[RMDB]
RNA sequence: GGGAACGACUCGAGUAGAGUCGAAAACCAUUCCUUAUACCGUGAGUAUUGCUGAAUUCAGUUUAGCGUGCAUGCUCUUGGCUAUUCUCAUAGUGAUUGUCAAAUUUGGAGUUACUUAUUCGUCAAUAAAACACUACCACGUUCGCGUGGUAGUGAAUCGAUAGAACCAGUUCGCUGGUUCUAUCGAAAAAGAAACAACAACAACAAC
Reactivity to DMS in 0.01 (KOAc 150mM, MgCl2 10mM, bicine 150mM(pH8.5), 24C), signal-to-noise 1, nucleotides 027 to 156: c050c020a240u000u010c050c020u000u000a210u000a060c030c000g040u010g000a020g020u020a060u000u010g070c000u010g000a070a070u000u000c180a150g070u000u000u000a030g010c020g040u010g010c050a200u000g000c010u000c010u000u000g010g010c020u000a120u000u000c040u020c020a170u010a050g020u010g020a110u000u000g020u000c020a050a030a190u000u000u000g000g000a220g010u000u000a100c040u000u000a120u000u000c040g000u010c090a070a070u000a000a140a150a200c020a030c000u010a000c020c020a000c000g010u000u000c300g040c010g010u000g000g030u000a010g030u010g010a010a070
Reactivity to 2A3 in 0.01 (KOAc 150mM, MgCl2 10mM, bicine 150mM(pH8.5), 24C), signal-to-noise 3, nucleotides 027 to 156: c020c000a020u040u050c010c000u090u120a100u040a070c000c050g000u040g030a000g000u010a060u170u100g040c010u000g080a130a110u200u100c050a160g110u080u090u140a060g030c050g030u050g070c040a000u090g020c000u000c000u010u010g020g000c000u000a030u080u010c060u010c030a110u030a120g130u100g040a030u110u100g110u090c020a050a130a120u090u070u090g000g000a030g090u110u090a060c100u160u040a050u160u150c060g110u050c030a080a100u140a100a130a010a020c040a000c000u000a010c000c000a000c000g010u020u040c170g020c000g110u000g000g000u000a020g000u000g000a000a000